[RMDB]
RNA sequence: GGGAACGACUCGAGUAGAGUCGAAAAAGUCGGUACUGUAAUACUUGUGUCUCUAGCCUUCAUGGAUCUUGAUUCCUUUCAAGGGCAGAACACCAGUUAGGCUAUUGAGAAUCUAUUGAAUCAAAGCACACUAAAUGGUCUUCGGACCAUUUAGUGUAAAAGAAACAACAACAACAAC
Reactivity to 2A3 in 0.01 (KOAc 150mM, MgCl2 10mM, bicine 150mM(pH8.5), 24C), signal-to-noise 2, nucleotides 027 to 126: a000g100u060c030g040g100u120a070c040u080g100u220a100a090u020a190c040u070u050g010u010g040u060c000u020c010u110a020g020c000c020u050u010c060a080u040g030g010a030u000c050u080u130g080a160u250u180c030c000u150u210u090c080a050a040g000g000g000c000a020g000a110a010c020a050c010c000a030g000u050u010a020g030g030c000u040a130u120u100g050a070g000a010a050u000c070u100a150u120u220g030a020a010u060c030a030a050a070g060c070
Reactivity to DMS in 0.01 (KOAc 150mM, MgCl2 10mM, bicine 150mM(pH8.5), 24C), signal-to-noise 3, nucleotides 027 to 126: a100g010u000c040g030g020u020a050c050u000g010u010a090a070u000a060c070u000u000g020u000g010u000c060u000c000u000a080g000c000c000u000u000c120a110u000g010g000a060u000c090u010u020g000a070u010u010c020c020u000u010u000c300a070a060g010g010g010c030a050g000a070a070c080a070c020c110a050g000u010u010a030g000g020c040u000a040u010u000g010a040g030a050a070u010c070u010a080u010u010g000a140a090u010c080a030a070a100g010c170
An RNA of 177 nucleotides, treated with 2A3 and DMS and read out base by base. It was measured as part of the RMDB library OK2TRN. 2A3 adducts were read by reverse transcription with SuperScript II with manganese. The reactions ran in a buffer of 150 mM KOAc, 10 mM MgCl2 and 150 mM bicine (pH 8.5), at 24 C.